An RNA of 177 nucleotides, treated with DMS and 2A3 and read out base by base. The data come from the RNA Mapping Database (RMDB), library OK2TRN. 2A3 adducts were read by reverse transcription with SuperScript II with manganese. The DMS profile rests on 46,005 reads. The 2A3 profile rests on 26,997 reads. Conditions: 150 mM KOAc, 10 mM MgCl2 and 150 mM bicine (pH 8.5), 24 C.
RNA sequence: GGGAACGACUCGAGUAGAGUCGAAAAACCCAAGGGAUUGGUGCAGUGGCGGGACGCAGUAUCCCGAUCGCACACCACCGCCCAGCUGGCGAUGGCCCUGUACGUUCUGGAAUCCUGCGUGGCUUGAACCAUCAUAUAUCUUCGGAUAUAUGAUGGUAAAAGAAACAACAACAACAAC
Reactivity to DMS in 0.01 (KOAc 150mM, MgCl2 10mM, bicine 150mM(pH8.5), 24C), signal-to-noise 9, nucleotides 027 to 126: a060c010c000c010a140a130g010g000g010a110u000u000g020g010u000g010c060a100g020u000g010g010c040g000g000g010a090c060g010c090a050g010u010a150u000c000c000c010g000a030u000c030g020c030a110c030a110c040c000a020c030c060g000c010c000c080a190g010c160u000g010g010c010g000a040u000g000g000c160c070c090u000g010u000a050c060g000u000u000c020u000g020g000a060a070u000c050c010u000g010c060g020u000g000g010c040u000u010g000a230
Reactivity to 2A3 in 0.01 (KOAc 150mM, MgCl2 10mM, bicine 150mM(pH8.5), 24C), signal-to-noise 8, nucleotides 027 to 126: a000c020c000c010a050a060g100g000g010a120u130u190g030g010u070g020c100a110g020u030g060g040c050g010g010g010a010c020g030c160a040g030u110a070u020c010c000c000g000a080u060c010g000c010a030c000a000c020c000a010c010c010g010c000c010c000a070g090c110u190g030g000c020g040a060u030g030g000c020c050c010u030g020u060a030c040g030u050u050c030u070g000g040a060a050u040c000c010u020g020c030g040u070g060g020c020u020u050g020a040